RNA sequence: GGGAACGACUCGAGUAGAGUCGAAAACGUAUCUUUGGUAGAAGGGGUGCCUGCGGUUUAGCAGACCGCAGGUCGCAGUGACUAGGGGGGAGCGACUGUUUACUAAAAACACAGGGGGCUGCAAUCCCUAUAUCUAUCCUUUCGAGGAUAGAUAUAGAAAAGAAACAACAACAACAAC
Reactivity to DMS in 0.01 (KOAc 150mM, MgCl2 10mM, bicine 150mM(pH8.5), 24C), signal-to-noise 9, nucleotides 027 to 126: c120g000u010a050u010c040u010u010u020g000g020u010a060g010a100a080g010g000g010g010u010g010c010c010u000g010c000g000g000u000u000u010a160g000c260a240g000a010c010c010g000c000a000g000g010u000c090g010c060a060g010u010g000a100c120u010a090g000g000g000g000g000g000a100g010c070g000a080c090u000g010u000u000u010a090c200u050a050a070a040a040a040c090a050c120a100g000g000g010g000g010c030u010g010c080a070a090u020c020c030
Reactivity to 2A3 in 0.01 (KOAc 150mM, MgCl2 10mM, bicine 150mM(pH8.5), 24C), signal-to-noise 8, nucleotides 027 to 126: c050g070u090a100u100c070u090u130u140g090g020u100a060g030a110a030g030g000g000g020u060g010c000c000u000g000c010g010g020u050u110u080a060g040c070a010g030a020c000c000g010c000a000g010g000u000c000g000c010a020g020u030g060a090c080u130a080g000g000g010g000g010g000a030g030c020g050a030c030u030g010u010u040u040a090c070u110a090a070a050a040a000c040a010c010a030g000g010g000g020g000c010u020g000c010a020a070u080c020c000
The record gives the reactivity of an RNA of 177 nucleotides to DMS and 2A3. The RNA was probed in 150 mM KOAc, 10 mM MgCl2 and 150 mM bicine (pH 8.5) at 24 C. Source: RMDB libraries RFM100 and RFMREP, as collected in RNAgym.